[RMDB]
RNA sequence: GGGAACGACUCGAGUAGAGUCGAAAAAUGGAUUCAAACUUUUACUAUUCUAAGUUAAUCAAUUGGUAGUCUACUUACUUUAUAGGAUUAUUGUAAGGAUAGGAUCAAUGAAGUGAAAUAUAUUUUAUUUUCACUGGUCAAUUACUCGUAUUAAAGCCCAAUAGAAUAAGUUCGCUUAUUCUAUUGGAAAAGAAACAACAACAACAAC
Reactivity to DMS in 0.01 (KOAc 150mM, MgCl2 10mM, bicine 150mM(pH8.5), 24C), signal-to-noise 1, nucleotides 027 to 156: a130u000g000g030a110u070u010c020a140a100a090c020u010u030u010u010a150c020u000a070u020u020c060u000a070a120g030u000u000a030a060u000c010a080a140u000u000g020g150u000a060g010u010c070u010a080c020u010u000a010c010u010u000u010a070u000a130g020g010a200u000u010a010u000u000g030u010a060a010g000g010a180u010a100g010g010a030u000c000a000a040u000g010a030a040g020u000g000a000a020a110u020a170u000a090u000u010u000u000a020u010u010u000u000c010a010c010u000g030g020u000c010a020a110u000u000a030c020u000c080g010u000a170u010u000a050a030a080g000c190
Reactivity to 2A3 in 0.01 (KOAc 150mM, MgCl2 10mM, bicine 150mM(pH8.5), 24C), signal-to-noise 2, nucleotides 027 to 156: a010u090g020g010a020u040u060c040a040a090a010c030u120u180u170u090a140c080u130a160u170u050c030u050a110a000g050u040u060a080a040u090c030a000a060u050u080g000g000u040a010g050u050c030u010a040c020u130u020a030c000u100u170u070a130u110a180g120g000a010u090u020a020u080u030g030u020a000a000g040g010a020u060a090g090g000a020u010c010a020a030u060g010a040a020g010u010g000a000a010a010u060a030u040a080u050u270u120u030a020u040u080u010u010c010a020c000u020g000g080u050c020a020a020u040u070a100c020u040c040g110u130a140u240u110a120a100a030g050c050

Chemical mapping of a 207-nucleotide RNA with DMS and 2A3.
For DMS the reverse transcriptase was MarathonRT.
2A3 adducts were read by reverse transcription with SuperScript II with manganese.
High DMS reactivity at an A or C suggests that its Watson-Crick edge is free.
It was measured as part of the RMDB library OK3TST.
The RNA was probed in 150 mM KOAc, 10 mM MgCl2 and 150 mM bicine (pH 8.5) at 24 C.
Values cover nucleotides 27 to 156.